An RNA of 177 nucleotides, treated with DMS and 2A3 and read out base by base. Reactivities are given for positions 27 through 126.
[RMDB]
RNA sequence: GGGAACGACUCGAGUAGAGUCGAAAAGGAGUGGCUACGCUUCGCGUGAAGAACGCCACGGCUCGCGAUGGCGGUCAUUACACCCUGCUUGCCGAGAAUCUGCAGGGCUGCGUGGUUUCAUCCGCCGGUUCUGGUAAGAGUUCGCUCUUACCAGAACAAAAGAAACAACAACAACAAC
Reactivity to DMS in 0.01 (KOAc 150mM, MgCl2 10mM, bicine 150mM(pH8.5), 24C), signal-to-noise 5, nucleotides 027 to 126: g020g010a130g010u000g000g000c010u000a060c180g000c010u010u000c150g020c230g010u000g010a070a060g020a060a040c090g000c000c000a020c020g010g020c100u010c100g010c100g000a120u010g000g010c020g010g020u010c030a060u010u000a120c080a230c020c010c010u000g000c000u010u010g010c100c040g010a180g010a130a150u000c060u000g000c000a030g000g000g000c090u000g020c100g010u010g010g010u000u000u020c070a130u010c000c000g010c020c030g010
Reactivity to 2A3 in 0.01 (KOAc 150mM, MgCl2 10mM, bicine 150mM(pH8.5), 24C), signal-to-noise 4, nucleotides 027 to 126: g050g010a060g010u030g020g000c020u060a010c050g000c040u050u080c090g030c080g150u140g040a040a050g020a080a000c030g000c000c010a010c010g010g060c090u110c070g160c030g210a220u060g000g010c000g010g000u030c010a010u030u090a010c000a020c020c000c000u000g000c040u090u090g050c050c050g120a080g050a110a090u060c030u050g000c000a000g000g030g000c020u010g020c010g020u020g000g030u000u060u090c070a130u020c030c020g020c020c010g030

The RNA was probed in 150 mM KOAc, 10 mM MgCl2 and 150 mM bicine (pH 8.5) at 24 C. The 2A3 profile rests on 6,532 reads.